[RMDB]
RNA sequence: GGGAACGACUCGAGUAGAGUCGAAAACGGCGUCCUUGAAGAACUUCUCGAUCUGCUCCUUGCGUUCCGGUUGAACGGUUGGCGGAGCAGCGGCUGCCGAAGACGCGGUGGGCGUGGCACUGCCCGCAGCUCCGAUCAUGUUCGCAUGAUCGGAGCUAAAAGAAACAACAACAACAAC
Reactivity to DMS in 0.01 (KOAc 150mM, MgCl2 10mM, bicine 150mM(pH8.5), 24C), signal-to-noise 2, nucleotides 027 to 126: c030g020g000c020g020u020c000c030u040u000g000a120a050g010a090a100c120u030u000c050u010c030g000a070u050c020u000g000c010u010c010c030u020u020g050c010g000u020u000c000c020g010g020u020u030g000a110a140c090g000g000u000u010g000g030c070g000g000a030g000c000a000g000c080g000g010c030u010g020c040c030g000a090a020g020a020c100g000c070g010g040u010g040g020g010c000g000u000g020g030c080a110c100u000g000c000c010c010g000c070
Reactivity to 2A3 in 0.01 (KOAc 150mM, MgCl2 10mM, bicine 150mM(pH8.5), 24C), signal-to-noise 5, nucleotides 027 to 126: c020g030g010c010g030u050c020c040u070u100g080a120a040g050a130a060c020u090u020c070u040c040g120a210u050c010u020g010c000u000c010c030u050u250g020c010g170u070u010c020c010g010g020u110u190g050a110a050c040g010g040u020u050g120g000c010g010g020a040g000c010a000g000c000g020g010c040u070g010c020c020g030a040a030g070a020c030g000c020g050g080u100g050g050g000c020g020u100g040g000c080a040c180u150g010c000c000c040g000c000
The data come from the RNA Mapping Database (RMDB), library OK1LIB. Structure probing data (DMS and 2A3) for a 177-nucleotide construct. Reactivities are given for positions 27 through 126. High DMS reactivity at an A or C suggests that its Watson-Crick edge is free. The RNA was probed in 150 mM KOAc, 10 mM MgCl2 and 150 mM bicine (pH 8.5) at 24 C. For 2A3 the reverse transcriptase was SuperScript II with manganese.